This 170-nucleotide RNA was probed chemically with 2A3 and DMS. Source: RMDB library 15KLIB, as collected in RNAgym. For DMS, 48,185 sequencing reads were counted. Values cover nucleotides 27 to 129. The 2A3 profile rests on 14,120 reads. The reactions ran in a buffer of 150 mM KOAc, 10 mM MgCl2 and 150 mM bicine (pH 8.5), at 24 C.
[RMDB]
RNA sequence: GGGAACGACUCGAGUAGAGUCGAAAAUUCCGAAGGAACGGAGGGGGGUGACUAGGAAUCAGGAUCCAGUGGAUCCGUGGGAAUUAUCCCGUUCCACCCCCGCGGCACACUCCUUCCCCCCUGCGGGUACCUAGCAGCUUCGGCUGCUAGAAAAGAAACAACAACAACAAC
Reactivity to 2A3 in 0.01 (KOAc 150mM, MgCl2 10mM, bicine 150mM(pH8.5), 24C), signal-to-noise 6, nucleotides 027 to 129: u050u010c010c010g010a010a000g030g010a050a000c050g020g050a160g040g010g000g000g010g000u030g040a090c090u090a050g050g010a030a030u090c060a080g000g000a010u000c020c040a120g120u240g160g010a000u000c000c000g010u040g000g030g040a020a010u180u050a130u230c020c000c000g000u040u030c000c010a060c020c010c000c010c000g000c020g000g010c060a010c000a020c080u010c000c000u020u030c000c000c000c000c000c000u020g010c050g010g000g020u010a030c000
Reactivity to DMS in 0.01 (KOAc 150mM, MgCl2 10mM, bicine 150mM(pH8.5), 24C), signal-to-noise 9, nucleotides 027 to 129: u020u010c000c040g020a100a060g000g000a060a070c110g000g000a160g030g010g050g020g020g060u030g030a090c170u080a090g000g000a060a050u040c140a120g020g010a010u000c000c020a180g040u040g000g040a000u010c030c000g030u010g000g030g030a050a050u070u040a080u020c020c030c020g030u000u000c030c010a120c000c030c020c010c010g020c030g030g000c050a060c080a090c090u000c000c000u010u030c000c030c060c010c000c020u020g030c100g010g010g010u040a060c100